This 177-nucleotide RNA was probed chemically with DMS. The RNA was probed in 150 mM KOAc, 10 mM MgCl2 and 150 mM bicine (pH 8.5) at 24 C. Values cover nucleotides 27 to 126. For DMS, 760 sequencing reads were counted.

[RMDB]
RNA sequence: GGGAACGACUCGAGUAGAGUCGAAAAUAUAGUAUGGAGGAGGCUGGAAGUUAGAAGGAGAAUGGAAGGAAGGUGAAGAAGUCCAGGUAUUGGCACUGGAGCCUGGAAAAAAUCCAAGAGCCGUAAAUCGUUAUAACCGAUUCGUCGGUUAUAACGAAAAAGAAACAACAACAACAAC
Reactivity to DMS in 0.01 (KOAc 150mM, MgCl2 10mM, bicine 150mM(pH8.5), 24C), signal-to-noise 1, nucleotides 027 to 126: u000a060u000a140g000u000a050u020g010g040a140g000g010a030g000g030c150u020g000g000a030a060g000u000u000a120g010a050a050g000g000a050g000a080a090u010g000g010a050a150g000g040a060a060g010g000u000g010a080a070g000a120a130g020u010c030c000a020g000g020u000a060u010u010g010g000c050a060c060u000g010g000a100g000c040c000u010g000g030a000a030a020a030a100a040u010c030c000a050a070g040a250g020c020c030g030u030a060a050a080